Chemical mapping of a 177-nucleotide RNA with 2A3 and DMS.
Values cover nucleotides 27 to 126.
The reactions ran in a buffer of 150 mM KOAc, 10 mM MgCl2 and 150 mM bicine (pH 8.5), at 24 C.
The DMS profile rests on 1,566 reads.
DMS adducts were read by reverse transcription with MarathonRT.
RNA sequence: GGGAACGACUCGAGUAGAGUCGAAAAUUGUCCAACACUCUAUUUAAAUAUCUUUCUGAUGGUACAGUAGAAGGGACUGGUUUCAUUCAAGACGGAGUGAGUUACAAAGGAGAGACCAAGUGGAUUGACGUCCUUCUUCUUUCGAGAAGAAGGACGUAAAAGAAACAACAACAACAAC
Reactivity to 2A3 in 0.01 (KOAc 150mM, MgCl2 10mM, bicine 150mM(pH8.5), 24C), signal-to-noise 3, nucleotides 027 to 126: u070u050g040u000c050c000a020a000c030a020c060u140c050u010a110u070u200u250a070a070a060u120a080u060c030u000u110u020c010u060g080a090u090g030g050u120a060c020a010g030u080a050g090a150a090g120g000g010a030c040u000g040g030u100u020u030c080a040u100u040c070a130a010g000a030c100g010g000a050g070u000g020a020g030u130u060a040c130a030a110a120g040g000a040g000a000g010a020c100c090a000a110g010u010g010g010a100u040u110g000
Reactivity to DMS in 0.01 (KOAc 150mM, MgCl2 10mM, bicine 150mM(pH8.5), 24C), signal-to-noise 2, nucleotides 027 to 126: u020u120g010u000c060c010a160a300c080a070c070u030c000u030a070u010u010u040a120a150a070u040a030u000c030u000u000u080c050u000g000a200u040g000g020u000a120c070a000g000u000a030g050a170a060g000g020g010a150c020u000g000g000u000u000u050c000a120u000u010c130a020a000g060a120c170g000g000a010g050u000g000a010g020u020u050a000c220a000a070a190g000g000a010g000a020g000a100c090c030a010a040g000u000g000g000a120u000u040g020